RNA sequence: GGGAACGACUCGAGUAGAGUCGAAAAGACGCCUGAUGGCGAACGUGCGCAAGAUAAGAAUGGUGGUAUAUACUGCCCAGAAUAACUAAUGGACGGCAGAGCGCACGCACCACCACCGUCCACCAGACCACCCGACGUAUUUCGAUACGUCGGGUGGAAAAGAAACAACAACAACAAC
Reactivity to 2A3 in 0.01 (KOAc 150mM, MgCl2 10mM, bicine 150mM(pH8.5), 24C), signal-to-noise 2, nucleotides 027 to 126: g010a000c000g000c000c030u210g160a180u300g000g000c000g050a000a000c000g000u000g000c060g000c000a190a070g040a300u000a100a010g020a120a080u080g000g000u040g030g050u010a020u000a000u030a300c000u090g060c010c010c010a040g030a280a000u160a250a000c180u250a250a300u000g000g000a000c010g060g000c070a000g010a020g050c020g000c020a000c000g010c000a000c030c000a000c000c000a000c000c020g000u040c050c000a000c000c000a000g000a000
Conditions: 150 mM KOAc, 10 mM MgCl2 and 150 mM bicine (pH 8.5), 24 C. An RNA of 177 nucleotides, treated with 2A3 and read out base by base. Reactivities are rounded to 0.1 and cut off at 0 and 3. Values cover nucleotides 27 to 126. Source: RMDB library OK1LIB, as collected in RNAgym.